[RMDB]
RNA sequence: GGGAACGACUCGAGUAGAGUCGAAAAACAGAAGCUUCCAAUAACCAAGGUAGUGGAGAGAAUGAAGAAAACAAAGAGAAGGAGAAACAGAAAGAGGAAGCAUCUAAUGCUGCGCGUCGGAGGCCAAGCCAAUACGCAUAUUCGUAUGCGUAUUGGCAAAAGAAACAACAACAACAAC
Reactivity to DMS in 0.01 (KOAc 150mM, MgCl2 10mM, bicine 150mM(pH8.5), 24C), signal-to-noise 2, nucleotides 027 to 126: a060c090a140g010a120a110g040c040u030u000c000c050a150a060u000a060a060c120c080a110a110g020g010u000a020g020u040g020g000a080g030a100g010a090a080u000g010a030a050g030a090a010a040a060c130a080a130a080g000a060g000a050a050g020g000a070g010a030a050a030c040a070g000a020a060a050g010a100g010g010a070a020g040c020a050u000c090u010a090a070u000g000c010u000g040c050g020c090g000u000c070g000g000a130g000g000c070c090a070a130
Reactivity to 2A3 in 0.01 (KOAc 150mM, MgCl2 10mM, bicine 150mM(pH8.5), 24C), signal-to-noise 1, nucleotides 027 to 126: a030c040a010g110a140a000g010c010u030u000c030c000a060a080u100a100a070c070c050a090a090g090g030u020a040g050u040g060g010a070g000a020g030a080a020u170g070a090a100g050a050a150a010a040c040a070a110a010g000a020g010a030a010g000g050a010g080a000a100a000c050a010g050a000a100a000g100a040g000g010a020a000g010c020a000u000c010u140a000a160u180g050c040u020g000c040g040c020g040u080c040g040g000a020g060g000c010c020a040a000

The data come from the RNA Mapping Database (RMDB), library OK2TRN.
The record gives the reactivity of an RNA of 177 nucleotides to DMS and 2A3.
The 2A3 profile rests on 931 reads.
The reactions ran in a buffer of 150 mM KOAc, 10 mM MgCl2 and 150 mM bicine (pH 8.5), at 24 C.
DMS (dimethyl sulfate) methylates the pairing face of unpaired adenines and cytosines.